[RMDB]
RNA sequence: GGGAACGACUCGAGUAGAGUCGAAAAGACUGGCUGGCACGGAGCCGUUCAAGCCAGAGCACCUCAUCCUUAGCCUUUUUUGGCUUGUUAUAUACAUAUCGCGAUAUGUAGCGCGGAUGAAAUUAGAGGGUUGCGAUUUGUUCGCAGGUCGCAACCCAAAAGAAACAACAACAACAAC
Reactivity to DMS in 0.01 (KOAc 150mM, MgCl2 10mM, bicine 150mM(pH8.5), 24C), signal-to-noise 9, nucleotides 027 to 126: g010a120c020u000g000g010c000u010g020g030c110a130c150g000g010a170g020c070c020g000u020u030c150a140a040g010c010c000a010g010a070g010c090a190c020c020u000c020a020u000c000c010u010u000a030g010c010c000u000u010u020u020u060u010g010g010c020u000u010g000u010u010a110u020a100u010a020c020a010u010a020u010c100g020c290g020a060u000a010u000g010u010a020g010c150g010c200g000g000a010u000g000a030a070a100u030u020a070g010a300
Reactivity to 2A3 in 0.01 (KOAc 150mM, MgCl2 10mM, bicine 150mM(pH8.5), 24C), signal-to-noise 9, nucleotides 027 to 126: g100a010c010u010g000g040c010u020g010g020c050a040c170g210g070a070g080c070c010g020u070u080c080a060a000g000c000c000a010g000a010g020c030a060c010c000u010c010a020u020c000c010u050u100a010g000c010c010u090u190u140u040u180u210g010g000c000u000u010g020u040u050a170u020a010u010a100c020a010u060a020u100c070g030c080g150a030u010a010u100g050u030a040g050c060g000c030g070g010a000u010g030a020a060a120u170u150a080g070a090